The record gives the reactivity of an RNA of 177 nucleotides to 2A3 and DMS. DMS adducts were read by reverse transcription with MarathonRT. The RNA was probed in 150 mM KOAc, 10 mM MgCl2 and 150 mM bicine (pH 8.5) at 24 C. Reactivities are given for positions 27 through 126.
RNA sequence: GGGAACGACUCGAGUAGAGUCGAAAAUGCCAGCCGACGCUGCCAUUGGCGGUUAAAUUGGUAUUGACGUAGCCGUCCGCCGCGCUAUUGACGUUCAGCGUUCCGCUGGCGUAGCGAGCGUCGAACAGAGGUCAAAAUUAUUCGUAAUUUUGACCUCAAAAGAAACAACAACAACAAC
Reactivity to 2A3 in 0.01 (KOAc 150mM, MgCl2 10mM, bicine 150mM(pH8.5), 24C), signal-to-noise 5, nucleotides 027 to 126: u070g030c000c010a000g010c020c010g010a000c010g010c010u030g060c050c030a170u110u200g020g000c020g010g000u050u160a060a100a090u180u140g040g020u080a110u030u170g040a040c080g030u070a030g040c030c010g010u010c010c010g000c010c000g010c010g000c030u100a110u180u190g080a050c040g020u060u120c130a010g000c000g070u150u030c040c040g000c000u000g000g000c010g000u010a000g000c020g020a010g000c000g010u010c010g000a060a010c030a060
Reactivity to DMS in 0.01 (KOAc 150mM, MgCl2 10mM, bicine 150mM(pH8.5), 24C), signal-to-noise 7, nucleotides 027 to 126: u000g010c010c010a050g010c080c100g000a020c050g020c010u000g000c170c130a150u000u010g010g020c000g010g010u000u010a030a080a120u010u010g020g020u000a080u000u010g010a080c140g030u000a130g000c060c000g010u010c020c080g000c010c010g030c070g010c060u000a080u010u010g010a090c050g000u000u000c060a030g010c000g010u010u000c100c110g030c000u000g000g000c010g010u000a030g000c050g000a050g000c010g000u000c010g000a120a110c190a090